This 177-nucleotide RNA was probed chemically with 2A3 and DMS.
RNA sequence: GGGAACGACUCGAGUAGAGUCGAAAAGAUAUGGACCGAGCUUUUGACGCUCGAUCACUCGGAAACGAGUGCAGAGAGCGAUAAGCCGGUCCUAAGUCAAAGUGACGUGGCUUCGGCCACGUCACAACACGUAUUCCUUGUUCGCAAGGAAUACGUGAAAAGAAACAACAACAACAAC
Reactivity to 2A3 in 0.01 (KOAc 150mM, MgCl2 10mM, bicine 150mM(pH8.5), 24C), signal-to-noise 1, nucleotides 027 to 126: g030a050u060a030u120g000g010a000c000c020g060a160g080c000u060u200u130u240g200a160c030g000c000u010c020g040a040u040c010a000c010u000c000g000g000a000a070a090c010g000a000g010u020g000c020a030g070a010g000a000g020c020g060a050u020a020a010g010c010c000g000g010u010c000c000u000a010a000g040u000c050a100a030a070g040u030g030a020c000g030u010g000g000c100u260u210c300g060g000c010c000a000c000g010u000c000a000c000a000a000
Reactivity to DMS in 0.01 (KOAc 150mM, MgCl2 10mM, bicine 150mM(pH8.5), 24C), signal-to-noise 2, nucleotides 027 to 126: g030a060u010a300u000g020g000a010c000c010g000a150g020c000u000u000u000u020g010a160c060g000c000u000c000g000a180u000c010a010c010u010c000g000g000a080a090a160c000g000a030g030u010g070c110a010g010a300g010a030g020c000g020a130u000a030a000g000c000c000g010g000u000c000c010u000a000a090g000u000c010a090a070a110g000u010g010a000c000g030u010g000g050c010u000u030c220g020g040c020c010a010c000g010u000c010a000c050a010a150

Overview:
For DMS the reverse transcriptase was MarathonRT. The DMS profile rests on 1,433 reads.